[RMDB]
RNA sequence: GGGAACGACUCGAGUAGAGUCGAAAAACGGAUGGUACGCCAUCCGACCGUUGGGUAGAAGCGUUCAAUCAGCACCGUGACGGUGCAGAUGGGAAAUUGCCCAUGAUACGCACCAUACGUGGUGCGAAAAAGCCAUCGGUGUUCGCACCGAUGGCAAUCAUCCUUACUUCUUCGGAAGUAAGGAUGAAAAAGAAACAACAACAACAAC
Reactivity to DMS in 0.01 (KOAc 150mM, MgCl2 10mM, bicine 150mM(pH8.5), 24C), signal-to-noise 2, nucleotides 027 to 156: a120c070g010g000a030u010g030g020u020a070c300g030c010c000a000u000c010c000g000a010c040c000g060u010u010g010g060g010u010a060g000a100a110g030c080g070u000u010c030a060a050u000c000a090g010c010a020c020c000g030u040g020a140c170g000g020u020g020c000a000g000a010u000g010g040g020a090a110a110u000u000g010c030c010c000a120u020g000a110u000a060c040g040c010a000c000c000a080u010a100c170g030u000g050g050u000g010c010g000a000a060a020a120a050g010c000c000a020u000c010g040g050u010g050u000u030c300g010c000a000c040c010g020a000u000g010g010c010a000a000
Reactivity to 2A3 in 0.01 (KOAc 150mM, MgCl2 10mM, bicine 150mM(pH8.5), 24C), signal-to-noise 4, nucleotides 027 to 156: a010c010g010g000a010u010g000g030u070a040c230g060c040c000a000u010c000c000g020a000c000c010g040u030u040g010g000g010u020a040g030a160a010g070c060g030u040u070c050a060a050u010c000a030g000c010a020c040c050g110u220g220a150c300g020g020u000g010c030a020g000a010u000g040g020g020a010a120a060u030u030g010c000c000c000a010u060g030a010u030a030c020g000c000a000c000c000a020u030a080c240g130u020g020g000u000g000c000g010a040a000a000a020a000g010c000c000a000u000c010g000g000u010g030u020u090c200g040c070a000c000c000g010a010u010g010g020c000a000a000